[RMDB]
RNA sequence: GGGAACGACUCGAGUAGAGUCGAAAAGAUAUGGAUCAACGAUAAUGAACGAACCAAGGGAGAACCAUGUCGGAAACGACAUGAGUUCUUUGAUCUUGCGUUCGUUCAUUAUCGUUGAUCCUAAGUCGAUUUAAUUAAGCUUCGGCUUAAUUAAAUCAAAAGAAACAACAACAACAAC
Reactivity to DMS in 0.01 (KOAc 150mM, MgCl2 10mM, bicine 150mM(pH8.5), 24C), signal-to-noise 2, nucleotides 027 to 126: g010a080u000a300u030g020g010a030u000c000a010a000c000g010a030u000a010a010u000g000a010a020c000g000a010a000c000c000a000a010g000g010g010a010g010a020a000c010c000a020u000g010u000c000g020g000a100a100a280c000g010a010c000a000u000g000a140g000u000u000c000u000u000u010g000a050u020c000u000u000g010c300g020u000u000c010g020u000u010c000a000u000u000a000u000c000g000u010u000g000a000u010c000c000u000a000a080g010u000c110